[RMDB]
RNA sequence: GGGAACGACUCGAGUAGAGUCGAAAAGAUAUGGACGUGUUUGCGAGGGACAUGGUCGGAAACGACCAUGAGAACCUACCCACCGCAUACACGUCCUAAGUCAAAGUUCUCUGUUCGCAGAGAACAACGUAAGUUAUCAGUUCGCUGAUAACUUACGAAAAGAAACAACAACAACAAC
Reactivity to DMS in 0.01 (KOAc 150mM, MgCl2 10mM, bicine 150mM(pH8.5), 24C), signal-to-noise 8, nucleotides 027 to 126: g010a030u000a210u000g000g010a020c000g020u000g000u000u000u000g020c000g010a160g010g010g010a300c020a000u000g010g020u000c000g010g000a050a050a120c000g010a010c000c000a010u000g000a090g000a090a130c130c120u000a090c080c050c110a240c180c010g000c010a010u000a000c000a010c000g010u000c010c000u000a010a050g000u000c030a110a080a110g010u000u000c000u000c000u000g000u010u010c190g020c020a010g000a030g000a010a000c010a050a070
Reactivity to 2A3 in 0.01 (KOAc 150mM, MgCl2 10mM, bicine 150mM(pH8.5), 24C), signal-to-noise 3, nucleotides 027 to 126: g010a010u020a020u090g000g000a010c010g010u000g030u010u040u020g040c070g040a300g080g000g000a020c020a010u000g000g010u000c000g000g010a040a020a020c010g000a010c000c010a000u000g000a020g030a050a080c010c020u080a100c010c030c030a210c190c010g000c000a000u010a020c000a000c010g000u000c000c000u000a000a000g010u000c020a070a040a110g000u010u010c010u000c000u000g040u040u090c300g020c070a000g000a000g000a010a010c010a020a010